[RMDB]
RNA sequence: GGGAACGACUCGAGUAGAGUCGAAAAGAUAUGGACCGUGAACUACUAGGUAGGAAGCGAAGAACUCGGAAACGAGGGAGCUUCUUUCCUAGCACGGUCCUAAGUCAAACCCAUCUUCGGAUGGGAACUAUGAUAGUGGGUUCGCCCACUAUCAUAGAAAAGAAACAACAACAACAAC
Reactivity to 2A3 in 0.01 (KOAc 150mM, MgCl2 10mM, bicine 150mM(pH8.5), 24C), signal-to-noise 4, nucleotides 027 to 126: g030a030u080a040u160g000g010a010c010c010g020u020g000a030a030c040u200a020c000u000a300g020g000u010a010g000g030a010a000g000c020g220a300a040g020a080a060c000u000c000g020g060a080a060a050c010g000a010g000g000g020a010g000c010u020u000c020u020u020u000c000c000u000a010g000c000a000c010g000g010u000c000c000u000a010a000g000u000c000a000a010a110c000c010c000a000u000c010u060u080c260g170g010a000u010g000g000g030a030a050
Reactivity to DMS in 0.01 (KOAc 150mM, MgCl2 10mM, bicine 150mM(pH8.5), 24C), signal-to-noise 4, nucleotides 027 to 126: g000a040u000a300u000g010g000a000c000c000g030u000g000a060a050c060u020a300c000u000a010g000g000u000a010g010g010a010a010g010c000g010a120a150g000a080a210c000u000c000g000g000a150a080a210c000g000a010g000g000g000a080g000c000u000u000c000u000u000u000c000c000u000a000g000c010a000c000g010g000u000c000c000u010a000a070g000u000c030a090a120a180c010c000c000a010u000c000u000u020c180g000g000a030u000g000g000g000a020a080
This 177-nucleotide RNA was probed chemically with 2A3 and DMS. The reactions ran in a buffer of 150 mM KOAc, 10 mM MgCl2 and 150 mM bicine (pH 8.5), at 24 C. The DMS profile rests on 4,594 reads.